[RMDB]
RNA sequence: GGGAACGACUCGAGUAGAGUCGAAAAGUGAAAGCUCCUUCUCUCGCUAUGUGUAACUCAUGAUUCUCAUGACCCCUGGUUGGAGAGAUCCGGACUAGGAGCCAGGGGGCCUCUGAUUCUGCCAGCCAAAACUGUCGUAAGUUCGCUUACGACAGAAACUAAAUGCCCUGUUCGCAGGGCAUUUAGUAAAAGAAACAACAACAACAAC
Reactivity to 2A3 in 0.01 (KOAc 150mM, MgCl2 10mM, bicine 150mM(pH8.5), 24C), signal-to-noise 1, nucleotides 027 to 156: g100u100g060a080a040a000g000c000u010c000c000u030u000c060u000c040u000c000g040c070u000a040u120g090u020g020u050a060a000c010u020c090a020u020g050a110u210u040c080u000c030a050u070g040a090c000c000c000c000u000g030g000u020u040g060g000a040g000a030g020a020u020c060c020g040g060a100c120u050a080g030g010a030g030c000c000a000g030g000g000g000g000c010c010u060c030u030g030a080u140u010c020u070g030c030c030a050g020c000c000a120a160a160a170c020u010g010u000c000g010u000a000a000g000u000u110c160g020c110u010u000a000c000g000a000c000a000g000a010a010